[RMDB]
Structure probing data (2A3 and DMS) for a 177-nucleotide construct. The 2A3 profile rests on 1,298 reads.
RNA sequence: GGGAACGACUCGAGUAGAGUCGAAAAUUUAUGGUACUGCUACUAUUGGUGUAUGUAAGUACACUGAUAUUGAUGUUAAUUCAGCUUUGAAUAUAUGUUUUGACAUACGCGAUAAUUGUUCAUUGGAGUCAACAAGAAUGUUCGCAUUCUUGUUGACAAAAGAAACAACAACAACAAC
Reactivity to 2A3 in 0.01 (KOAc 150mM, MgCl2 10mM, bicine 150mM(pH8.5), 24C), signal-to-noise 2, nucleotides 027 to 126: u020u020u010a040u020g070g020u060a000c020u010g000c010u000a030c020u000a030u000u000g000g000u030g010u040a000u000g090u090a090a100g020u000a000c000a000c000u000g010a000u020a020u010u100g050a030u020g030u190u170a130a080u100u030c030a000g040c050u080u130u040g060a100a000u060a010u040a000u120g050u070u020u010u040g000a000c000a000u030a030c020g060c010g040a000u050a090a060u170u030g000u010u000c010a070u110u120g130g000a050
Reactivity to DMS in 0.01 (KOAc 150mM, MgCl2 10mM, bicine 150mM(pH8.5), 24C), signal-to-noise 2, nucleotides 027 to 126: u000u000u000a010u000g000g000u010a040c040u000g000c070u000a140c150u000a020u000u010g020g020u000g000u010a000u000g010u010a060a130g010u000a020c000a010c010u000g000a010u000a020u000u010g010a110u000g000u000u010a050a130u000u000c030a040g010c070u000u000u000g010a100a050u000a030u000a010u000g000u000u000u000u000g020a050c010a100u000a010c020g010c000g000a020u000a090a120u000u000g010u000u010c020a110u010u010g010g010a300
The reactions ran in a buffer of 150 mM KOAc, 10 mM MgCl2 and 150 mM bicine (pH 8.5), at 24 C. For DMS, 1,839 sequencing reads were counted.